Structure probing data (DMS and 2A3) for a 177-nucleotide construct. 2A3 is a SHAPE reagent: it acylates the 2'-hydroxyl of flexible nucleotides of all four kinds. The RNA was probed in 150 mM KOAc, 10 mM MgCl2 and 150 mM bicine (pH 8.5) at 24 C. For 2A3 the reverse transcriptase was SuperScript II with manganese.
RNA sequence: GGGAACGACUCGAGUAGAGUCGAAAAAUGCCAGAGCAUUUUCGCAUCUGGCCAGUAAACUAAUCGAGCUGGAGGUUCCUACCACAGCGACGAUUUUGGACAUAGGCAGCGCACCGGCUCGUAGAAUAUAAUAAGCAUCCUUCGGGAUGCUUAUUAUAAAAGAAACAACAACAACAAC
Reactivity to DMS in 0.01 (KOAc 150mM, MgCl2 10mM, bicine 150mM(pH8.5), 24C), signal-to-noise 5, nucleotides 027 to 126: a070u020g010c010c020a000g000a020g000c010a150u010u040u020u040c180g000c020a160u000c010u000g000g000c020c110a050g000u000a100a100a110c090u000a070a060u030c000g000a170g020c030u000g010g000a190g000g020u000u040c030c040u010a140c010c010a090c110a040g000c050g000a100c110g010a080u010u000u010u020g010g000a120c220a170u010a030g000g000c210a060g000c060g010c040a090c020c010g010g020c020u010c020g000u000a060g010a080a070u010
Reactivity to 2A3 in 0.01 (KOAc 150mM, MgCl2 10mM, bicine 150mM(pH8.5), 24C), signal-to-noise 6, nucleotides 027 to 126: a000u110g010c010c000a000g000a020g000c030a090u060u040u120u300c180g000c030a300u050c000u020g000g000c000c000a000g030u110a010a100a090c060u060a090a010u060c000g000a010g010c030u040g030g030a060g110g000u040u120c010c020u030a050c020c020a030c020a030g070c040g120a080c030g120a170u040u020u050u080g030g000a010c020a060u060a020g030g040c030a010g030c060g020c050a020c010c010g000g000c000u010c020g020u040a020g080a140a020u070